An RNA of 177 nucleotides, treated with 2A3 and DMS and read out base by base. It was measured as part of the RMDB library OK2TST. The reactions ran in a buffer of 150 mM KOAc, 10 mM MgCl2 and 150 mM bicine (pH 8.5), at 24 C. As a SHAPE reagent, 2A3 marks flexible, mostly unpaired nucleotides at the ribose 2'-OH. The 2A3 profile rests on 1,122 reads.
RNA sequence: GGGAACGACUCGAGUAGAGUCGAAAAAGGGGCGCGUGUUGCCCGAUACGCCGAUCGCCGAAUGGGUGACGAACAUGCGGUGACGAUGGCGCCGCUCGACGCGCCGAAUCGGCCGGCGGCGGCCGAACAGCCUAAAUAGCUUCGGCUAUUUAGGCUGAAAAGAAACAACAACAACAAC
Reactivity to 2A3 in 0.01 (KOAc 150mM, MgCl2 10mM, bicine 150mM(pH8.5), 24C), signal-to-noise 1, nucleotides 027 to 126: a000g120g020g010g000c090g000c100g080u160g090u190u160g010c000c000c010g030a130u170a050c020g000c020c000g030a220u070c020g030c040c000g040a070a060u220g110g010g000u060g050a150c010g070a160a020c060a070u190g000c010g030g010u020g040a050c000g270a200u220g150g010c060g000c000c000g000c020u070c090g000a040c020g000c000g000c000c000g020a030a030u020c000g020g020c040c000g000g000c000g030g010c000g030g060c000c010g010a040a030
Reactivity to DMS in 0.01 (KOAc 150mM, MgCl2 10mM, bicine 150mM(pH8.5), 24C), signal-to-noise 2, nucleotides 027 to 126: a080g000g000g000g000c020g040c090g010u020g020u000u000g010c040c000c010g000a100u000a060c080g030c000c020g020a120u010c150g000c020c000g000a070a030u010g000g000g050u000g000a190c050g000a120a160c180a040u000g000c000g010g020u010g000a050c040g020a160u010g000g000c020g030c010c000g010c010u010c100g010a180c050g020c030g000c000c000g000a050a090u010c020g000g010c030c040g020g010c070g010g010c010g020g020c040c030g000a050a220